[RMDB]
RNA sequence: GGGAACGACUCGAGUAGAGUCGAAAAUUGGCGAAUGCCUGUGGAUGUACAUUUGUUGCGGGUUCGAGACCCGUCAGAGCCCGGCUCUGUAGCUCAAUGGUAGAGCGGUGUAUUCACAUAAACUUGUAAAAGACACGUGCCUUCGGGCACGUGUCAAUCUUAUUGUAUUGUUCGCAAUACAAUAAGAAAAAGAAACAACAACAACAAC
Reactivity to 2A3 in 0.01 (KOAc 150mM, MgCl2 10mM, bicine 150mM(pH8.5), 24C), signal-to-noise 3, nucleotides 027 to 156: u090u050g020g010c060g070a290a080u300g000c020c010u010g000u020g000g030a050u040g050u140a020c010a050u100u090u180g070u050u010g020c000g000g010g010u000u010c030g010a030g020a080c000c000c000g000u010c000a000g000a000g030c140c280c120g070g000c000u000c010u000g040u040a010g000c000u010c030a020a040u210g270g050u150a020g000a000g000c020g010g010u000g000u010a030u000u050c020a000c010a030u150a050a080a020c070u080u140g050u160a050a100a020a050g000a000c020a010c010g000u000g000c000c020u040u050c150g030g010g020c000a000c000g000u010g000u000c010a000a010
Reactivity to DMS in 0.01 (KOAc 150mM, MgCl2 10mM, bicine 150mM(pH8.5), 24C), signal-to-noise 3, nucleotides 027 to 156: u030u000g010g040c020g030a120a060u000g020c000c050u000g010u000g030g020a110u010g000u000a010c000a070u000u010u000g030u000u000g000c000g020g010g040u000u000c070g000a300g010a030c010c030c000g010u010c050a040g010a120g010c000c130c110g100g020c010u000c010u000g030u000a070g010c040u000c040a050a090u000g000g010u000a070g040a050g050c010g010g000u000g000u000a090u000u000c060a060c010a050u000a060a090a080c070u010u000g000u010a070a080a110a190g000a010c010a030c000g050u000g000c000c000u000u000c300g030g010g000c000a010c000g000u000g000u000c000a010a020
Record summary:
Structure probing data (2A3 and DMS) for a 207-nucleotide construct. The 2A3 profile rests on 1,918 reads. For 2A3 the reverse transcriptase was SuperScript II with manganese.